[RMDB]
RNA sequence: GGGAACGACUCGAGUAGAGUCGAAAAGCAAACUCAAUGGGUGCGUUCAGCGACUACGCAUCCGUCUGGAGUCCGUCGAACGCGGUUGGUGUCCUCGUGUCCGUGGCCGACGCCGCCGACGGCGUCAACGCCGCAUUAGUUUCGACUAAUGCGGCGUAAAAGAAACAACAACAACAAC
Reactivity to DMS in 0.01 (KOAc 150mM, MgCl2 10mM, bicine 150mM(pH8.5), 24C), signal-to-noise 2, nucleotides 027 to 126: g030c140a080a140a100c010u000c010a140a020u000g000g020g010u000g000c000g010u000u010c090a080g030c130g020a080c070u010a010c010g030c000a010u000c000c000g010u000c170u000g010g030a050g020u010c010c000g020u000c050g010a020a290c300g000c000g020g000u000u000g030g010u010g000u010c000c040u000c060g000u030g010u000c150c070g000u000g000g000c010c020g000a020c130g010c000c000g000c020c040g000a220c020g000g000c060g000u000c110a140
Reactivity to 2A3 in 0.01 (KOAc 150mM, MgCl2 10mM, bicine 150mM(pH8.5), 24C), signal-to-noise 2, nucleotides 027 to 126: g080c070a100a060a000c000u010c040a010a120u030g000g020g000u020g020c020g000u030u090c090a070g080c020g300a190c080u070a020c000g030c010a010u050c030c000g000u000c100u090g110g010a010g000u040c000c000g000u040c020g080a090a040c040g000c030g040g000u070u110g050g000u140g000u210c000c020u050c020g090u160g160u050c110c080g010u020g010g000c010c000g040a050c020g010c000c010g000c010c040g040a010c000g000g010c010g000u020c080a000

Description
The data come from the RNA Mapping Database (RMDB), library OK2TST. Chemical mapping of a 177-nucleotide RNA with DMS and 2A3. The DMS profile rests on 1,780 reads. Reactivities are given for positions 27 through 126.